Conditions: 150 mM KOAc, 10 mM MgCl2 and 150 mM bicine (pH 8.5), 24 C. This 170-nucleotide RNA was probed chemically with DMS and 2A3. The 2A3 profile rests on 10,659 reads. 2A3 adducts were read by reverse transcription with SuperScript II with manganese. Reactivities are given for positions 27 through 129.
RNA sequence: GGGAACGACUCGAGUAGAGUCGAAAAACGGAUGCCCAGGUCGGACCGCGGGGAGGUGGAGAUGCCAUGCCGACCCGAAGAGGAAAGAAGAACACGGACGCGAACCCGUAAGUGGAACCCUGAUCCUAAACUAGCUCGUUCGCGAGCUAGAAAAGAAACAACAACAACAAC
Reactivity to DMS in 0.01 (KOAc 150mM, MgCl2 10mM, bicine 150mM(pH8.5), 24C), signal-to-noise 5, nucleotides 027 to 129: a130c110g010g020a070u030g030c040c010c040a130g000g030u020c060g000g050a070c060c000g000c000g010g020g030g030a110g010g030u060g050g010a080g010a110u060g050c080c020a050u050g030c070c010g000a110c060c060c050g040a070a060g020a090g020g010a010a020a040g040a050a020g010a070a120c110a080c040g010g020a060c040g000c040g000a040a050c020c000c020g000u030a060a080g090u060g010g010a040a070c040c010c010u050g030a140u030c030c010u050a030a100a100
Reactivity to 2A3 in 0.01 (KOAc 150mM, MgCl2 10mM, bicine 150mM(pH8.5), 24C), signal-to-noise 5, nucleotides 027 to 129: a040c120g050g020a060u130g030c000c020c020a030g010g110u040c010g030g020a040c040c000g000c030g020g020g020g000a020g010g010u060g010g020a130g020a060u150g040c010c010a050u110g000c000c030g040a070c000c000c000g010a050a040g000a020g030g010a020a020a010g020a000a000g030a040a000c070a010c020g000g030a020c040g000c000g020a020a040c010c000c000g010u030a080a010g040u020g050g010a040a040c020c010c000u060g060a080u080c000c020u030a080a030a040